Chemical mapping of a 177-nucleotide RNA with 2A3 and DMS. Source: RMDB library OK2TST, as collected in RNAgym.
RNA sequence: GGGAACGACUCGAGUAGAGUCGAAAAGCAUUCCAUCAAAAGAUGGGUGAAGUCUGAGUGCACUGGCUCAUUCCUGUAAUCCCCAUACUUUGGGAUGCUGAAUGGGGAGGAUCACUUGAGUCCAGGAGAUAGAUAGGGUCUUCGGACCCUAUCUAUCAAAAGAAACAACAACAACAAC
Reactivity to 2A3 in 0.01 (KOAc 150mM, MgCl2 10mM, bicine 150mM(pH8.5), 24C), signal-to-noise 2, nucleotides 027 to 126: g020c000a010u200u150c010c000a030u100c050a120a240a150a160g010a010u010g010g000g030u030g050a070a010g120u000c060u080g080a030g060u050g050c070a030c120u040g060g000c010u010c000a000u040u060c020c030u040g090u100a060a070u040c040c050c000c000a020u050a140c030u040u100u040g070g100g030a050u150g050c030u010g050a000a030u050g000g030g020g020a030g040g040a040u050c020a010c060u040u010g010a010g020u030c030c000a030g000g040a050
Reactivity to DMS in 0.01 (KOAc 150mM, MgCl2 10mM, bicine 150mM(pH8.5), 24C), signal-to-noise 3, nucleotides 027 to 126: g020c010a020u000u010c000c010a030u000c080a170a120a080a100g020a010u020g010g020g010u000g000a090a090g020u000c050u000g000a110g020u010g010c160a170c060u010g000g000c010u000c020a040u000u010c110c130u020g000u020a130a170u000c030c000c000c040a020u010a050c130u000u010u000g010g020g000a030u010g010c060u000g000a080a040u000g000g010g000g000a080g000g010a080u000c050a030c050u000u000g010a060g000u000c000c050a060g010g010a150